Description:
An RNA of 177 nucleotides, treated with DMS and 2A3 and read out base by base. The 2A3 profile rests on 42,733 reads. The data come from the RNA Mapping Database (RMDB), library OK1LIB. Conditions: 150 mM KOAc, 10 mM MgCl2 and 150 mM bicine (pH 8.5), 24 C.
RNA sequence: GGGAACGACUCGAGUAGAGUCGAAAAAGACUCGUCUCUCCACGAGAUCUGACCACACUUGGGCCACCAGAUUUCUGGAAUGCGUCUGGUGAAUCCACAUGUACGCUUUCAGUGGCGGGACACAGUCACACAUAAGUUGUUUCGACAACUUAUGUGUAAAAGAAACAACAACAACAAC
Reactivity to DMS in 0.01 (KOAc 150mM, MgCl2 10mM, bicine 150mM(pH8.5), 24C), signal-to-noise 8, nucleotides 027 to 126: a040g000a020c020u000c190g000u000c020u000c000u010c030c040a050c020g000a040g010a040u020c030u000g020a180c100c080a070c090a040c180u010u000g000g000g000c120c020a030c010c010a010g000a030u000u030u040c040u000g010g060a090a080u030g010c300g010u000c010u010g000g030u000g020a090a090u020c020c010a020c200a090u010g000u000a050c090g000c120u010u000u000c030a130g040u000g000g000c050g000g000g000a020c030a060c210a020g000u000c030
Reactivity to 2A3 in 0.01 (KOAc 150mM, MgCl2 10mM, bicine 150mM(pH8.5), 24C), signal-to-noise 9, nucleotides 027 to 126: a000g030a010c020u020c060g000u000c000u000c000u000c010c000a010c020g080a090g010a090u030c070u090g110a150c060c030a040c020a010c070u060u080g020g000g000c030c010a010c000c000a010g010a040u120u220u080c060u160g070g190a140a100u210g030c020g010u000c000u010g000g000u020g030a020a060u060c020c000a040c010a050u070g020u060a030c060g010c000u030u040u040c050a060g010u010g010g010c000g020g000g000a000c040a000c030a040g030u040c010